[RMDB]
RNA sequence: GGGAACGACUCGAGUAGAGUCGAAAAGAUAUGGACAUACGAGGGAGCUGGUCGGAAACGACCCAGCGAGGAUCUCGAUGUCCUAAGUCAAAACCGUUAGUCAUUAGUUCGCUAAUGACUAACGGAAGUGGGUAAACUAGUUCGCUAGUUUACCCACAAAAGAAACAACAACAACAAC
Reactivity to 2A3 in 0.01 (KOAc 150mM, MgCl2 10mM, bicine 150mM(pH8.5), 24C), signal-to-noise 4, nucleotides 027 to 126: g010a000u050a030u100g010g010a000c000a010u300a300c040g000a010g000g010g020a020g010c020u010g000g020u000c000g010g040a080a060a050c030g020a050c140c240c020a000g010c020g040a190g000g030a010u000c010u000c010g010a000u010g000u010c000c010u020a100a020g050u020c030a020a010a080a150c010c000g000u000u000a010g000u000c000a000u010u000a000g040u060u080c280g020c190u000a000a000u000g000a000c000u000a000a000c000g000g000a020a020
Reactivity to DMS in 0.01 (KOAc 150mM, MgCl2 10mM, bicine 150mM(pH8.5), 24C), signal-to-noise 3, nucleotides 027 to 126: g000a040u000a300u000g000g000a010c000a010u000a110c000g020a010g000g010g010a030g000c000u000g000g020u000c000g010g000a110a090a270c000g000a020c150c110c040a000g000c000g000a060g020g010a020u000c000u000c000g000a030u000g000u000c000c010u010a000a070g020u010c040a130a070a100a130c000c000g010u000u000a000g000u000c000a000u000u000a000g000u000u010c200g010c020u000a000a000u010g000a010c000u000a010a000c000g000g000a000a020